Chemical mapping of a 177-nucleotide RNA with 2A3 and DMS.
RNA sequence: GGGAACGACUCGAGUAGAGUCGAAAAGAUAUGGAGCCCUAGACGAGGUACACGAUUCUCGGAAACGAGGGUGUACUACCCACCGUCUAGUGGCUCCUAAGUCAAAAGCCAUGCUUCGGCAUGGCAAGUUAGUUCCUAACUUCGGUUAGGAACUAACAAAAGAAACAACAACAACAAC
Reactivity to 2A3 in 0.01 (KOAc 150mM, MgCl2 10mM, bicine 150mM(pH8.5), 24C), signal-to-noise 2, nucleotides 027 to 126: g020a000u030a010u090g010g000a010g010c000c000c000u010a000g000a010c000g050a070g180g040u020a000c010a000c030g280a300u300u130c010u000c010g020g010a040a030a000c010g000a000g020g210g000u020g000u020a000c010u030a030c030c050c020a080c020c000g000u000c000u010a000g000u130g000g000c000u000c000c000u000a000a010g010u000c010a000a100a070a030g000c010c000a000u010g010c000u080u100c250g100g000c000a000u000g000g000c000a000a000
Reactivity to DMS in 0.01 (KOAc 150mM, MgCl2 10mM, bicine 150mM(pH8.5), 24C), signal-to-noise 5, nucleotides 027 to 126: g000a040u000a300u000g010g010a020g010c010c000c010u000a000g010a010c000g010a140g040g000u000a000c000a010c010g010a170u010u020c010u000c010g010g010a060a040a100c010g010a030g020g010g020u000g000u000a010c030u000a030c070c060c110a300c120c000g000u000c000u000a010g010u010g040g020c000u000c000c000u000a010a040g000u010c040a100a040a090a090g010c010c000a000u000g020c010u000u010c230g000g010c000a000u000g000g000c010a010a000
The DMS profile rests on 5,110 reads.
For DMS the reverse transcriptase was MarathonRT.